RNA sequence: GGGAACGACUCGAGUAGAGUCGAAAAGGAUAAUGAGUUUGAAUAUUCUACAUCCAAGGAAUUAGAUUGUCUUUACGAAUCAUACGGCGUAAACGAUGAUGUAAGACAUUGUUUUGCAUCACCUAGACACGGUAUUAGUAUUCGUACUAAUACCGUGAAAAGAAACAACAACAACAAC
Reactivity to DMS in 0.01 (KOAc 150mM, MgCl2 10mM, bicine 150mM(pH8.5), 24C), signal-to-noise 9, nucleotides 027 to 126: g000g010a030u000a100a150u000g010a050g020u000u000u010g010a170a110u010a020u000u000c010u010a160c240a050u000c030c020a110a130g010g000a090a100u010u010a070g010a100u000u000g010u000c050u000u000u000a020c040g000a060a040u000c100a070u010a090c170g010g000c040g010u000a030a030a070c180g010a020u000g000a020u000g010u000a010a010g000a010c020a170u000u010g010u000u000u000u000g010c020a020u000c020a050c050c020u000a080g020a300
Reactivity to 2A3 in 0.01 (KOAc 150mM, MgCl2 10mM, bicine 150mM(pH8.5), 24C), signal-to-noise 9, nucleotides 027 to 126: g010g000a020u030a070a080u170g030a020g040u050u130u170g180a200a070u150a030u120u010c010u000a030c030a050u000c010c010a030a040g110g040a080a070u100u060a100g090a170u090u140g030u020c020u030u040u030a020c020g040a050a050u080c060a070u120a190c110g060g000c020g070u060a020a050a030c060g020a040u060g000a000u010g010u020a010a010g010a010c140a150u080u230g030u010u020u000u010g000c000a010u020c010a030c020c020u030a030g020a050